Conditions: 150 mM KOAc, 10 mM MgCl2 and 150 mM bicine (pH 8.5), 24 C. An RNA of 177 nucleotides, treated with 2A3 and DMS and read out base by base. For DMS, 3,297 sequencing reads were counted. Reactivities are given for positions 27 through 126. Source: RMDB library TTRDES, as collected in RNAgym.

RNA sequence: GGGAACGACUCGAGUAGAGUCGAAAAGAUAUGGAGGUGUGAUGGGAGCCUGGUUUCGGAAACGAAACCAAGGGCGAAGAACAUCCACCUCCUAAGUCAAACAGGGUAAUGUUCGCAUUACCCUGAAGUACGUUGCAUAGUUCGCUAUGCAACGUACAAAAGAAACAACAACAACAAC
Reactivity to 2A3 in 0.01 (KOAc 150mM, MgCl2 10mM, bicine 150mM(pH8.5), 24C), signal-to-noise 2, nucleotides 027 to 126: g000a000u000a010u040g000g000a000g000g000u010g020u230g080a020u020g000g040g050a100g000c010c020u030g020g000u000u000u020c000g010g000a000a010a010c000g000a000a000a000c010c020a020a020g150g020g000c020g070a280a080g040a030a000c000a000u040c000c020a000c000c010u000c000c000u000a000a000g000u000c000a020a080a120c000a000g020g010g020u000a000a000u020g040u050u140c300g000c230a010u000u000a000c010c000c000u000g000a000a010
Reactivity to DMS in 0.01 (KOAc 150mM, MgCl2 10mM, bicine 150mM(pH8.5), 24C), signal-to-noise 2, nucleotides 027 to 126: g000a010u000a010u010g000g000a010g030g020u000g000u010g000a020u010g000g000g000a070g020c010c020u010g000g000u000u000u000c010g030g000a000a010a020c000g010a000a000a010c000c000a020a060g020g010g030c010g020a090a150g020a160a300c000a000u000c000c000a000c010c010u000c000c000u000a000a040g000u000c010a140a170a300c010a000g000g000g040u000a000a010u000g010u000u040c240g010c000a010u000u000a000c000c000c000u000g010a020a030